[RMDB]
RNA sequence: GGGAACGACUCGAGUAGAGUCGAAAAUCGCCAAAAGCACUCUGAUUGACAAAUACGAUUUAUCUAAUUUACACGAAAUUGCUUCUGGGGGCGCACCUCUUUCGAAAGAAGUCGGGGAAGCGGUUGCAAAACGCUUCCAUCUUCCAGGGAUACGACACCUCACCUUAGUGUUCGCACUAAGGUGAGGAAAAGAAACAACAACAACAAC
Reactivity to 2A3 in 0.01 (KOAc 150mM, MgCl2 10mM, bicine 150mM(pH8.5), 24C), signal-to-noise 1, nucleotides 027 to 156: u010c000g060c000c000a000a220a000a000g000c030a030c010u080c050u050g050a170u120u140g060a080c050a050a110a040u090a050c050g050a090u030u150u110a100u150c040u100a140a160u170u050u160a050c090a000c010g030a120a050a000u130u020g000c000u010u050c030u020g000g000g080g000g000c050g000c000a020c000c010u040c050u000u050u060c000g000a010a100a030g040a050a030g030u040c050g000g000g220g000a000a000g040c040g040g100u150u100g030c020a010a010a010a010c000g000c000u000u000c000c000a000u020c010u020u000c000c000a020g010g030g000a040u130a140c060g020a020c020a010
Overview:
This 207-nucleotide RNA was probed chemically with 2A3. The RNA was probed in 150 mM KOAc, 10 mM MgCl2 and 150 mM bicine (pH 8.5) at 24 C. For 2A3, 509 sequencing reads were counted. Reactivities are given for positions 27 through 156.